RNA sequence: GGGAACGACUCGAGUAGAGUCGAAAAAAUGCCGCCUCAGUUCCAAGCUCUUUCGUGGCACUGUAAACAGUCCUAUUGAGUGAGGGGCAGUCAACCACGUUGCGAAGCUAAAUUAUCUGGUCGAGAGUUACGAUUCCCUACUUCGGUAGGGAAUCAACACGUUCCUCUUGUUCGCAAGAGGAACGUGAAAAGAAACAACAACAACAAC
Reactivity to 2A3 in 0.01 (KOAc 150mM, MgCl2 10mM, bicine 150mM(pH8.5), 24C), signal-to-noise 2, nucleotides 027 to 156: a000a000u060g030c010c010g090c010c010u060c010a080g050u130u020c030c030a080a040g010c010u040c010u060u040u070c080g060u110g020g020c090a020c040u030g120u180a130a120a070c030a010g030u010c020c020u100a100u080u200g020a030g000u090g030a030g000g000g000g010c010a030g010u000c010a030a000c020c040a050c080g050u070u040g010c070g060a050a030g040c000u070a100a150a070u210u060a060u060c080u030g060g010u020c030g030a000g000a010g230u060u110a050c040g000a020u010u030c000c000c000u000a000c000u010u060c080g000g040u010a000g010g000g000a000a000u000c000a000a000
The record gives the reactivity of an RNA of 207 nucleotides to 2A3. The data come from the RNA Mapping Database (RMDB), library M2RFPK. Conditions: 150 mM KOAc, 10 mM MgCl2 and 150 mM bicine (pH 8.5), 24 C. The 2A3 profile rests on 816 reads. 2A3 is a SHAPE reagent: it acylates the 2'-hydroxyl of flexible nucleotides of all four kinds.